[RMDB]
RNA sequence: GGGAACGACUCGAGUAGAGUCGAAAAGUGGAGAACAUGAAAGCUAUAACAGCUAGACGUAUUCUGCAAGGCCUGGGGCACUAUUUGAAGGCAGAAGGGAAAGUGGAAUGCUACCGCACUCUGCAUCCCUACGAUGUGUUUUCGAACACAUCGUAGGAAAAGAAACAACAACAACAAC
Reactivity to DMS in 0.01 (KOAc 150mM, MgCl2 10mM, bicine 150mM(pH8.5), 24C), signal-to-noise 4, nucleotides 027 to 126: g030u000g000g010a080g000a100a050c040a060u000g010a170a120a040g000c020u000a120u010a130a180c260a030g040c010u000a080g010a160c200g000u010a070u000u000c020u000g020c030a090a100g000g000c040c030u000g000g000g010g010c080a060c120u010a080u000u010u000g010a110a050g000g010c040a020g020a090a080g000g010g000a030a090a120g010u000g010g000a030a050u000g000c040u000a110c170c150g000c060a040c060u000c020u000g010c030a140u000c050
Reactivity to 2A3 in 0.01 (KOAc 150mM, MgCl2 10mM, bicine 150mM(pH8.5), 24C), signal-to-noise 4, nucleotides 027 to 126: g030u010g010g020a050g000a040a020c020a040u090g070a080a110a010g000c030u050a040u080a300a090c080a070g000c020u030a030g010a060c050g030u060a060u020u060c010u030g040c030a060a080g080g000c000c040u050g000g050g010g000c040a020c120u100a140u150u100u170g050a030a020g060g000c010a010g050a060a020g010g000g020a080a190a040g020u050g020g130a100a050u080g000c010u030a050c020c040g040c020a000c020u030c000u010g000c010a040u060c000